[RMDB]
Chemical mapping of a 177-nucleotide RNA with DMS and 2A3. Reactivities are given for positions 27 through 126. The 2A3 profile rests on 2,193 reads. The data come from the RNA Mapping Database (RMDB), library OK2TRN. 2A3 adducts were read by reverse transcription with SuperScript II with manganese. The RNA was probed in 150 mM KOAc, 10 mM MgCl2 and 150 mM bicine (pH 8.5) at 24 C.

RNA sequence: GGGAACGACUCGAGUAGAGUCGAAAAAUGAAGACCGACCCGCGCUACGCCAGGGCAUACGAGAACAUGAAGCCGGGGGUGAUCACCGCGGAGGGCUUCCUGGGAGAUGACCCGCGCCCGUUGGCCGGGGUGUAGUGCUAUUCGUAGCACUACACCCAAAAGAAACAACAACAACAAC
Reactivity to DMS in 0.01 (KOAc 150mM, MgCl2 10mM, bicine 150mM(pH8.5), 24C), signal-to-noise 3, nucleotides 027 to 126: a060u010g010a080a050g000a110c030c020g000a110c110c010c020g010c030g010c060u020a040c080g000c040c020a110g030g000g000c020a080u000a090c150g000a100g000a140a110c150a090u000g020a160a110g000c020c020g030g000g000g010g000u000g000a100u000c130a060c130c010g020c090g010g000a070g000g000g010c050u000u000c010c080u000g020g000g010a080g010a050u010g010a110c010c010c030g010c090g020c010c040c050g030u020u000g010g000c050c050g000
Reactivity to 2A3 in 0.01 (KOAc 150mM, MgCl2 10mM, bicine 150mM(pH8.5), 24C), signal-to-noise 2, nucleotides 027 to 126: a000u080g030a070a020g020a060c010c030g050a080c030c000c010g020c010g020c050u060a060c050g040c030c010a030g070g000g000c030a030u110a110c070g030a010g070a270a060c080a150u130g090a090a020g030c010c010g130g010g040g030g010u070g040a090u100c070a010c040c020g040c050g050g010a100g000g020g020c000u020u000c010c010u040g110g000g000a180g040a110u090g080a090c000c020c000g000c030g000c040c000c000g040u040u060g040g000c040c050g040